[RMDB]
RNA sequence: GGGAACGACUCGAGUAGAGUCGAAAAGCACAGAGUACACAAAGAAAGGUGCGACUCCGACCGUCUCUGCAGUCCCAGUUGUUAAGCUGAAUAAUAAGAGACUUGUGAAUAUCGCCCGAAAGGCGCGCGAAAAUGCGGCCAAAGCAAAGCAAAUUGCACCGUGUAGUUUUUUCGAAAACUACACGGUAAAAGAAACAACAACAACAAC
Reactivity to 2A3 in 0.01 (KOAc 150mM, MgCl2 10mM, bicine 150mM(pH8.5), 24C), signal-to-noise 2, nucleotides 027 to 156: g020c070a010c030a030g080a020g000u120a040c020a000c020a040a190a000g050a160a120a010g110g020u120g040c060g020a020c020u010c050c020g040a060c020c020g050u000c000u000c000u040g040c000a040g050u060c000c040c000a040g030u090u060g080u080u050a040a030g000c020u030g030a060a000u150a200a060u170a160a060g020a000g000a010c000u060u100g030u020g030a040a030u040a010u160c020g020c000c010c010g070a010a020a040g040g000c180g000c010g020c020g300a240a020a050a110u260g000c000g030g000c000c020a090a040a000g020c040a040a030a030g040c020a050a000a150u120u150g010c000
Reactivity to DMS in 0.01 (KOAc 150mM, MgCl2 10mM, bicine 150mM(pH8.5), 24C), signal-to-noise 1, nucleotides 027 to 156: g030c060a080c020a050g000a110g000u010a080c020a150c010a140a090a160g060a140a120a050g040g010u020g000c040g020a070c050u000c000c030g000a080c040c030g080u000c050u000c030u020g010c050a110g000u000c030c010c000a140g000u000u000g030u000u000a070a160g020c010u020g000a090a100u030a110a140u000a060a110g030a080g030a040c020u000u010g040u020g000a060a150u000a050u010c020g010c030c020c050g000a100a100a130g040g020c050g000c030g090c060g010a030a060a110a100u000g030c000g020g000c020c000a000a060a150g000c010a030a070a190g000c080a050a030a170u000u000g020c160